[RMDB]
RNA sequence: GGGAACGACUCGAGUAGAGUCGAAAAUGACGAGGAGGAGGUUUAUCGAGGUUUUCGGCGGAUGCCUCCCGGCUGGAGCGAUGACAGCCGCAAGUCCUCUCUUAAAACAAAGGGGUGACCCUUUGGAGAAACAUCACCAUUUCGAUGGUGAUGUUUCAAAAGAAACAACAACAACAAC
Reactivity to 2A3 in 0.01 (KOAc 150mM, MgCl2 10mM, bicine 150mM(pH8.5), 24C), signal-to-noise 6, nucleotides 027 to 126: u140g040a010c100g010a010g000g010a010g010g000a010g010g050u000u110u090a200u100c030g020a100g080g110u050u060u150u210c090g110g020c030g120g020a020u050g000c000c000u000c000c000c000g010g000c010u010g020g030a090g090c130g050a050u130g060a030c000a000g010c000c000g000c020a050a030g060u010c000c000u000c000u000c020u050u140a080a070a030a060c000a000a000a000g000g010g010g020u070g090a160c000c000c000u000u000u000g000g000a030
Reactivity to DMS in 0.01 (KOAc 150mM, MgCl2 10mM, bicine 150mM(pH8.5), 24C), signal-to-noise 4, nucleotides 027 to 126: u010g000a050c150g010a020g010g000a060g000g010a010g000g010u000u010u010a120u020c030g000a120g010g010u020u000u040u020c050g000g010c070g000g000a030u000g010c000c000u000c000c010c000g000g010c020u000g000g000a120g010c160g010a120u010g000a120c010a010g000c010c000g000c130a080a130g010u010c000c020u000c000u010c020u020u030a070a060a090a110c010a000a000a010g000g000g000g010u030g000a240c000c000c000u000u010u000g000g000a120